[RMDB]
RNA sequence: GGGAACGACUCGAGUAGAGUCGAAAAAUCUGUGCGUACGUGUCAAGAGACAAUGGCCUGGUGUACCCAUGUGAUCCGGGGUGCUGCAAACCGAGUUGCGGCACAAAAAUGGGCCACCUCCCUAGAAUGGAUGUAGAAUUUCGCCAGACGUUCGGUGAACACCACUAUGGUUCGCCAUAGUGGUGUUAAAAGAAACAACAACAACAAC
Reactivity to DMS in 0.01 (KOAc 150mM, MgCl2 10mM, bicine 150mM(pH8.5), 24C), signal-to-noise 2, nucleotides 027 to 156: a050u000c050u010g010u000g030c070g020u010a050c100g030u010g020u020c030a080a210g010a200g030a070c030a060a120u000g010g000c010c000u000g010g040u010g030u000a070c000c010c010a080u010g010u010g040a100u000c080c080g020g010g030g000u000g010c010u000g040c010a030a070a300c030c150g000a090g020u000u010g010c000g010g020c020a050c070a020a010a060a070a080u010g020g000g050c090c020a010c030c000u010c020c010c010u000a090g000a130a090u000g010g020a060u000g030u010a090g010a080a150u000u000u000c020g020c030c020a080g000a080c100g030u010u000c050g000g040u000g010
Reactivity to 2A3 in 0.01 (KOAc 150mM, MgCl2 10mM, bicine 150mM(pH8.5), 24C), signal-to-noise 3, nucleotides 027 to 156: a000u030c050u020g130u120g040c030g040u040a050c050g050u060g080u110c040a150a040g080a010g020a050c030a070a150u120g030g010c020c030u060g060g020u060g030u130a180c000c030c020a020u090g040u080g060a040u060c060c030g000g020g000g060u000g000c010u010g000c000a060a070a080c070c040g040a070g040u030u000g020c010g000g030c000a000c020a000a130a000a000a000u030g000g010g010c020c010a010c000c020u020c000c000c010u050a080g060a090a090u130g080g020a010u060g040u110a070g060a120a100u060u090u110c030g000c000c000a030g020a060c080g060u100u080c060g040g030u030g050